[RMDB]
RNA sequence: GGGAACGACUCGAGUAGAGUCGAAAAACUUUGAUGGCGGUACUAUGAAUUGAUGCAAGGUGUGGAGCGACCUUAAACAGUUCUAGUGGUGCUCUGAAUGGAGUGCUCUACUGAGAUUAUAAAAUAGCAUGCAUAGAGUGCUUCGGCACUCUAUGAAGUACUCACGUGUCUUCGGACACGUGAGUACAAAAGAAACAACAACAACAAC
Reactivity to 2A3 in 0.01 (KOAc 150mM, MgCl2 10mM, bicine 150mM(pH8.5), 24C), signal-to-noise 3, nucleotides 027 to 156: a000c060u130u030u150g060a040u020g010g030c050g010g050u030a010c030u060a040u160g070a060a050u060u040g100a100u090g100c050a040a020g010g000u030g000u070g070g010a020g010c010g000a010c000c000u030u070a070a040a060c040a020g000u020u010c020u010a020g020u000g080g070u010g010c000u000c010u070g150a110a100u240g030g020a020g010u040g020c000u010c020u020a050c040u040g030a020g010a070u100u120a100u130a150a050a070a070u170a060g120c110a060u120g030c000a000u010a010g000a000g000u010g000c030u010u080c080g000g000c000a000c000u000c000u000a010u000g000a000a000